[RMDB]
RNA sequence: GGGAACGACUCGAGUAGAGUCGAAAAUGUACGGAAAGAUCAUGGAAAUCCUCUUCCCGAACGGCCUGGUGGCGAAGACCGCCGAUGAUCAUCGACUCGCCCUGUUCGUGAUGCACAUGGUGGGUAAUGCUCUACCUGUAUUCGUACAGGUAGAGCAAAAAGAAACAACAACAACAAC
Reactivity to 2A3 in 0.01 (KOAc 150mM, MgCl2 10mM, bicine 150mM(pH8.5), 24C), signal-to-noise 2, nucleotides 027 to 126: u100g000u040a040c020g050g000a070a020a000g010a050u040c030a060u170g090g050a020a080a080u070c000c000u010c020u040u010c020c010c000g010a090a030c010g030g010c000c040u060g050g050u090g020g070c090g070a110a020g070a050c010c010g010c020c000g010a020u070g020a020u040c030a020u040c020g060a020c020u020c020g020c000c010c000u020g010u040u020c060g010u120g170a100u240g010c000a010c000a010u020g000g010u030g030g000g030u010a060a040
Reactivity to DMS in 0.01 (KOAc 150mM, MgCl2 10mM, bicine 150mM(pH8.5), 24C), signal-to-noise 3, nucleotides 027 to 126: u000g010u010a050c070g020g000a060a180a060g000a030u000c040a050u000g010g010a100a120a090u000c020c050u000c070u000u000c020c000c010g010a080a060c090g010g010c060c040u000g040g040u000g000g010c050g010a140a080g000a130c070c030g010c020c000g000a040u000g000a060u000c050a110u010c130g010a020c010u000c030g000c010c000c030u000g000u010u000c040g010u020g000a080u020g000c150a030c040a030u000g010g020u000g000g000g000u010a080a120